Annotation
Conditions: 150 mM KOAc, 10 mM MgCl2 and 150 mM bicine (pH 8.5), 24 C. This 207-nucleotide RNA was probed chemically with DMS and 2A3. The 2A3 profile rests on 1,612 reads. For DMS the reverse transcriptase was MarathonRT. It was measured as part of the RMDB library ARCHII.

RNA sequence: GGGAACGACUCGAGUAGAGUCGAAAAGUGGCCGAGUUAAUAGCCCUGGGUAUAGUAACAAUGUUGAAUAUGACUCUUAAUUGAGGAAAUGGGUGAUCCGCAGCCAAAUCCUAAGGACAUUUUAUUGUCUAUGGAUGCAGUUCACAGGCCAGAUGGCGAUAUUAUCUAGCUUCGGCUAGAUAAUAUCAAAAGAAACAACAACAACAAC
Reactivity to DMS in 0.01 (KOAc 150mM, MgCl2 10mM, bicine 150mM(pH8.5), 24C), signal-to-noise 3, nucleotides 027 to 156: g040u010g010g020c040c010g020a110g020u010u010a100a120u000a120g010c010c020c020u000g030g000g010u000a100u000a090g020u000a070a130c070a100a150u010g020u000u000g010a120a120u000a080u000g000a130c000u000c010u000u010a060a210u000u000g010a070g010g000a050a080a090u000g010g000g030u000g000a090u010c040c020g000c050a090g000c030c020a040a080a120u000c080c020u010a060a180g030g010a030c010a020u000u000u000u000a110u040u000g000u010c000u010a300u010g010g000a020u000g010c070a040g010u000u000c050a070c020a070g020g020c010c020a100g010a110u000g020g020c220
Reactivity to 2A3 in 0.01 (KOAc 150mM, MgCl2 10mM, bicine 150mM(pH8.5), 24C), signal-to-noise 3, nucleotides 027 to 156: g070u020g000g020c020c000g040a060g040u060u110a090a060u050a200g020c010c000c010u040g050g020g020u130a140u050a180g080u090a110a030c060a130a170u120g040u100u110g090a090a020u170a060u160g100a030c000u000c020u060u080a150a110u290u060g020a000g020g040a030a060a130u120g030g020g000u020g000a020u020c010c040g010c040a000g000c000c020a040a110a030u030c000c000u020a040a080g020g000a010c000a010u100u130u090u210a170u300u040g000u000c000u020a040u060g000g000a010u020g030c000a010g000u010u020c010a010c000a030g000g060c000c010a040g040a120u100g050g000c050